[RMDB]
RNA sequence: GGGAACGACUCGAGUAGAGUCGAAAAGAAGGAGAAGCCUCAGGCUCCUGUUUCCUGGGCAAAGUCAAUAUGUUCCAGAUACUGUCCACACACAACAUAAAGUAGUGUUCAGGUUUUACCAUGACUGGAAGAAUUCAAAAUUCGUUUUGAAUUCUUCAAAAGAAACAACAACAACAAC
Reactivity to DMS in 0.01 (KOAc 150mM, MgCl2 10mM, bicine 150mM(pH8.5), 24C), signal-to-noise 5, nucleotides 027 to 126: g010a060a030g000g010a030g010a090a100g020c050c040u010c130a070g020g010c000u000c010c010u000g010u000u000u010c010c020u000g010g010g000c080a060a080a140g010u000c070a070a120u010a080u010g010u000u000c040c030a080g000a110u000a070c080u000g010u000c030c030a070c060a050c070a060c090a070a060c130a100u010a060a070a120g010u000a070g020u000g000u000u000c030a050g000g010u000u000u010u020a090c070c070a080u000g010a060c060u000g010
Reactivity to 2A3 in 0.01 (KOAc 150mM, MgCl2 10mM, bicine 150mM(pH8.5), 24C), signal-to-noise 3, nucleotides 027 to 126: g010a040a020g030g040a050g020a100a020g090c030c060u080c080a090g090g040c010u000c000c020u030g070u020u060u010c000c000u000g000g020g000c050a070a060a010g080u080c030a050a050u070a070u280g050u110u090c030c020a010g030a050u070a150c030u050g020u020c040c000a010c000a000c000a000c020a130a140c010a090u170a140a170a020g060u090a020g010u010g030u040u030c020a030g030g000u010u120u080u070a040c020c010a070u060g070a030c030u060g030